Chemical mapping of a 177-nucleotide RNA with DMS and 2A3. It was measured as part of the RMDB library TTRDEL.
[RMDB]
RNA sequence: GGGAACGACUCGAGUAGAGUCGAAAAGAUAUGGAGUAGUUUGACAUCGAUCCGUAACAUCACUCGGAAACGAGUGUGGGGGAGUCGCACUACUCCUAAGUCAAACACGUACGUUCGCGUACGUGAAGCCUCAAUGAAUGUUCGCAUUCAUUGAGGCAAAAGAAACAACAACAACAAC
Reactivity to DMS in 0.01 (KOAc 150mM, MgCl2 10mM, bicine 150mM(pH8.5), 24C), signal-to-noise 3, nucleotides 027 to 126: g000a030u000a300u000g010g000a010g010u000a000g020u000u000u000g020a040c010a240u030c150g010a110u020c000c010g000u000a070a150c130a090u030c010a000c000u000c000g000g010a040a080a120c000g000a010g020u000g000u000g000g000g000g020g000a040g020u000c000g010c230a030c020u000a000c000u000c000c000u010a010a050g010u000c020a110a140a220c000a000c000g020u000a000c000g000u000u010c150g010c020g020u000a000c000g010u000g000a060a110
Reactivity to 2A3 in 0.01 (KOAc 150mM, MgCl2 10mM, bicine 150mM(pH8.5), 24C), signal-to-noise 4, nucleotides 027 to 126: g020a010u050a050u150g000g010a000g010u010a000g000u000u050u120g050a050c070a160u300c140g110a160u030c030c040g090u180a090a080c040a180u260c010a000c010u000c010g000g040a040a040a050c010g000a010g000u010g010u050g010g000g010g000g000a100g010u010c000g000c030a000c000u000a000c010u010c010c010u020a030a000g020u000c030a030a070a040c010a000c010g000u000a020c010g010u000u060c300g020c020g100u010a000c000g000u000g000a010a020
The reactions ran in a buffer of 150 mM KOAc, 10 mM MgCl2 and 150 mM bicine (pH 8.5), at 24 C.